[RMDB]
RNA sequence: GGGAACGACUCGAGUAGAGUCGAAAAGAUAUGGAUCCAUGAACUACUAGUCUAAUCGGAAACGAUUAAGUCUAGCAUGGAGUCCUAAGUCAAAAGGACAAGCAGGCCUUCGGGCCUGCUUGUCCAAGCUAAGUCUAGAGUUCGCUCUAGACUUAGCAAAAGAAACAACAACAACAAC
Reactivity to DMS in 0.01 (KOAc 150mM, MgCl2 10mM, bicine 150mM(pH8.5), 24C), signal-to-noise 1, nucleotides 027 to 126: g000a000u010a300u000g020g030a300u030c000c000a010u000g000a100a100c130u030a300c020u010a000g000u000c000u000a000a000u000c010g010g000a120a150a160c000g000a010u000u000a000a110g000u000c010u000a020g000c000a000u000g000g000a100g000u000c000c010u010a050a030g000u000c030a070a080a110a180g020g000a060c010a010a020g000c010a050g010g010c000c000u000u000c150g010g010g070c010c040u000g000c030u030u000g000u000c020c000a000a020